An RNA of 177 nucleotides, treated with 2A3 and DMS and read out base by base. The reactions ran in a buffer of 150 mM KOAc, 10 mM MgCl2 and 150 mM bicine (pH 8.5), at 24 C. The data come from the RNA Mapping Database (RMDB), library OK1LIB. Reactivities are rounded to 0.1 and cut off at 0 and 3.
[RMDB]
RNA sequence: GGGAACGACUCGAGUAGAGUCGAAAAUGGAAGUAGAAACAGUAGGCACCCCACAGCGGAAGCACUUUGUAGUGGCAACCAACAUCAUAGAAAAUGGCGUUACAUUGGACGUCGAUGUCGUGGUGGAAGAUACGAGUCUCUUCGGAGACUCGUAUCUAAAAGAAACAACAACAACAAC
Reactivity to 2A3 in 0.01 (KOAc 150mM, MgCl2 10mM, bicine 150mM(pH8.5), 24C), signal-to-noise 3, nucleotides 027 to 126: u150g040g010a010a040g030u090a070g080a100a110a010c050a070g070u060a060g130g000c050a030c000c000c030c000a020c030a010g130c100g080g010a060a000g020c010a010c080u050u180u100g110u180a110g010u040g110g000c000a000a040c010c000a000a030c000a030u050c020a030u080a100g110a020a080a020a030u150g010g000c000g010u000u050a150c090a280u130u210g140g020a000c010g030u010c050g050a020u050g000u040c040g010u020g010g020u020g040g030a030
Reactivity to DMS in 0.01 (KOAc 150mM, MgCl2 10mM, bicine 150mM(pH8.5), 24C), signal-to-noise 2, nucleotides 027 to 126: u010g010g000a090a040g000u000a010g050a100a160a190c070a070g020u020a000g000g020c090a120c030c000c030c030a060c100a130g000c100g000g000a080a280g020c000a050c040u000u030u010g030u020a020g000u090g000g000c030a010a290c040c040a080a100c030a080u000c020a000u000a020g000a120a050a060a080u040g000g000c050g040u020u000a160c190a050u000u000g000g000a110c110g040u000c000g000a060u010g040u010c020g000u000g000g000u000g000g050a100